[RMDB]
RNA sequence: GGGAACGACUCGAGUAGAGUCGAAAAUAAAGAUCAAGGAGACAAAGAUCGUCGAGAGCUGCGUCGGUUCCUAAGAAAUCUUACGUUGAAACUUUAGAAUUAUCUGACGACAGUUUCAUCGAAGAUGCACCCACUGGCUAUUCGUAGCCAGUGGGUGAAAAGAAACAACAACAACAAC
Reactivity to DMS in 0.01 (KOAc 150mM, MgCl2 10mM, bicine 150mM(pH8.5), 24C), signal-to-noise 2, nucleotides 027 to 126: u020a040a150a100g000a060u020c040a110a180g040g030a160g000a030c150a090a050a080g020a040u000c050g000u000c000g020a100g040a060g010c010u010g010c160g000u000c000g000g000u010u000c010c000u020a030a090g000a000a070a030u000c020u010u010a060c200g000u000u000g000a010a060a070c020u050u000u020a090g040a050a120u040u050a140u010c180u000g000a150c020g000a110c210a040g000u000u000u010c010a000u000c010g020a010a020g000a030u010g000
Reactivity to 2A3 in 0.01 (KOAc 150mM, MgCl2 10mM, bicine 150mM(pH8.5), 24C), signal-to-noise 4, nucleotides 027 to 126: u110a030a170a000g060a040u090c090a020a060g180g030a070g100a090c090a070a110a030g070a030u070c020g040u000c020g000a000g000a000g100c050u050g020c000g010u000c000g020g010u040u030c000c000u050a070a040g060a060a120a020u000c000u000u030a120c030g010u010u020g030a060a030a000c010u020u120u120a050g070a140a110u260u190a220u300c130u150g080a030c030g030a040c070a020g000u000u000u190c030a090u000c000g000a020a000g020a000u020g020

The record gives the reactivity of an RNA of 177 nucleotides to DMS and 2A3. The reactions ran in a buffer of 150 mM KOAc, 10 mM MgCl2 and 150 mM bicine (pH 8.5), at 24 C. For 2A3 the reverse transcriptase was SuperScript II with manganese. DMS adducts were read by reverse transcription with MarathonRT. For 2A3, 2,149 sequencing reads were counted.